[RMDB]
RNA sequence: GGGAACGACUCGAGUAGAGUCGAAAAGAGGCUGUGAUGAUUGGCGCAGGGGUACGGACCUCAGCUGAAUCAUGGGAGCUGAAUGUAUGUGUGUCUCUGCCCUCCUGCAUGUGGCAGGUUGAUGGGGCGGUGACCAACCAUUCGUGGUUGGUCACCGAAAAGAAACAACAACAACAAC
Reactivity to DMS in 0.01 (KOAc 150mM, MgCl2 10mM, bicine 150mM(pH8.5), 24C), signal-to-noise 1, nucleotides 027 to 126: g000a300g010g000c010u000g000u070g010a040u010g000a010u000u000g010g120c030g000c300a080g010g030g030g020u000a230c300g010g000a160c000c000u000c040a210g010c060u030g000a000a000u000c000a000u000g000g060g000a000g000c000u000g000a120a080u000g010u010a080u000g000u000g020u010g000u000c040u030c040u000g010c040c000c000u010c000c000u000g000c030a250u000g000u020g030g050c000a000g000g010u090u070g000a040u060g000g000g000g020